[RMDB]
RNA sequence: GGGAACGACUCGAGUAGAGUCGAAAAUUGGGGCACUAGCUUUUCCUCUGCUCAGGAGGAGGUUACAGCCAGCAAAGCACCAAGCAGAGAGGCAGGCAGCACCUGGGUGAGGUGCAGUCCACAUCUGCUCAGCUUCUCAGAGGUGCCAGACUUGGCACUCCUACCUGACCUUCGGGUCAGGUAGGAGAAAAGAAACAACAACAACAAC
Reactivity to 2A3 in 0.01 (KOAc 150mM, MgCl2 10mM, bicine 150mM(pH8.5), 24C), signal-to-noise 2, nucleotides 027 to 156: u080u060g000g010g000g000c050a010c080u060a020g020c020u060u060u110u050c000c000u000c020u040g040c070u080c180a090g020g040a030g010g000a030g010g010u080u080a070c040a030g020c000c060a010g050c050a070a040a030g030c000a010c010c010a080a040g050c090a010g000a010g000a000g020g000c020a020g010g050c020a000g000c020a010c000c020u030g120g120g040u130g150a040g000g010u020g000c030a000g070u080c050c030a120c030a140u050c030u020g000c000u020c020a020g020c010u040u010c000u000c010a050g020a070g050g010u070g000c000c020a010g030a060c060u110u110g000g000c020a020
Reactivity to DMS in 0.01 (KOAc 150mM, MgCl2 10mM, bicine 150mM(pH8.5), 24C), signal-to-noise 1, nucleotides 027 to 156: u000u000g020g080g070g060c050a090c080u000a050g020c020u000u000u000u010c010c040u010c000u010g040c210u020c150a210g020g000a170g020g010a060g020g010u000u000a090c050a110g030c040c020a040g000c020a080a070a120g040c080a060c010c010a060a090g000c000a080g000a040g000a130g050g030c040a050g010g000c030a120g010c050a030c040c000u010g020g030g010u010g020a060g060g000u010g000c020a080g000u020c010c030a060c010a120u010c010u020g000c010u010c050a140g010c050u000u000c050u000c060a210g000a220g020g010u000g020c010c020a080g010a050c180u020u010g030g040c010a190
Chemical mapping of a 207-nucleotide RNA with 2A3 and DMS.
For DMS the reverse transcriptase was MarathonRT.
Conditions: 150 mM KOAc, 10 mM MgCl2 and 150 mM bicine (pH 8.5), 24 C.
It was measured as part of the RMDB library OK3TST.